[RMDB]
RNA sequence: GGGAACGACUCGAGUAGAGUCGAAAAUUUCUGGCGAAGCAUGAAAACGCCAGCCUGCGCGCCUCGCUGGACAGGGUGAACAACGUCGCCAGUGAACAGCAGACGACCAUCACCAUGCUGAAAAAUCAGCUUCAUGUUGCCCUCACCAGGGCAGACACUUUGCAACAGCAUUCGUGCUGUUGCAAAGAAAAGAAACAACAACAACAAC
Reactivity to 2A3 in 0.01 (KOAc 150mM, MgCl2 10mM, bicine 150mM(pH8.5), 24C), signal-to-noise 1, nucleotides 027 to 156: u080u070u020c010u020g000g000c010g070a120a030g010c050a050u100g050a120a130a020a050c020g000c000c000a000g000c000c020u050g000c070g000c030g030c050c050u040c040g040c020u000g030g030a060c080a050g060g010g060u060g050a010a120c070a120a020c060g070u000c040g010c050c000a010g020u010g060a090a000c000a000g030c000a020g000a070c070g010a030c000c050a090u070c000a040c040c000a020u070g020c030u000g050a040a040a020a020a300u070c000a000g020c020u100u050c030a020u040g020u060u040g000c000c000c000u040c010a050c020c030a040g060g000g000c000a010g000a000c020a000

Source: RMDB library OK3TST, as collected in RNAgym. Chemical mapping of a 207-nucleotide RNA with 2A3. The RNA was probed in 150 mM KOAc, 10 mM MgCl2 and 150 mM bicine (pH 8.5) at 24 C. For 2A3, 897 sequencing reads were counted.